RNA sequence: GGGAACGACUCGAGUAGAGUCGAAAACUUUGAUACUACUCCAAUUAAUGCUAUGGUUCAGUACAACUAUUUUGGCAAUUUUUCCAGGCUGCUAUUGGAAUUCCAUGAUCCUGCUAUCCGGACAACAGACUGUGGUUCUAUUCGUAGAACCACAGUCAAAAGAAACAACAACAACAAC
Reactivity to 2A3 in 0.01 (KOAc 150mM, MgCl2 10mM, bicine 150mM(pH8.5), 24C), signal-to-noise 5, nucleotides 027 to 126: c040u100u070u140g090a050u050a070c060u020a030c030u030c010c000a090a060u110u130a140a080u140g030c030u120a160u240g040g010u060u090c090a050g060u130a080c030a080a010c060u090a150u110u210u060u030g080g020c060a100a100u120u010u010u080u020c000c010a030g020g010c020u000g010c020u050a050u100u040g010g000a040a040u070u020c030c010a030u060g030a060u040c000c010u020g020c020u060a030u060c020c040g020g000a000c040a080a010c000a110
Reactivity to DMS in 0.01 (KOAc 150mM, MgCl2 10mM, bicine 150mM(pH8.5), 24C), signal-to-noise 1, nucleotides 027 to 126: c110u000u000u070g080a080u030a030c060u000a040c030u020c070c050a050a080u020u000a110a110u020g020c020u000a020u020g020g030u000u000c040a060g000u020a080c170a000a100c270u020a020u000u040u000u000g030g000c090a020a130u000u000u000u000u000c000c000a000g000g000c010u050g030c020u020a070u010u000g050g010a040a120u020u030c010c020a060u040g000a050u020c020c000u000g020c000u020a000u000c010c020g000g000a050c100a040a080c110a140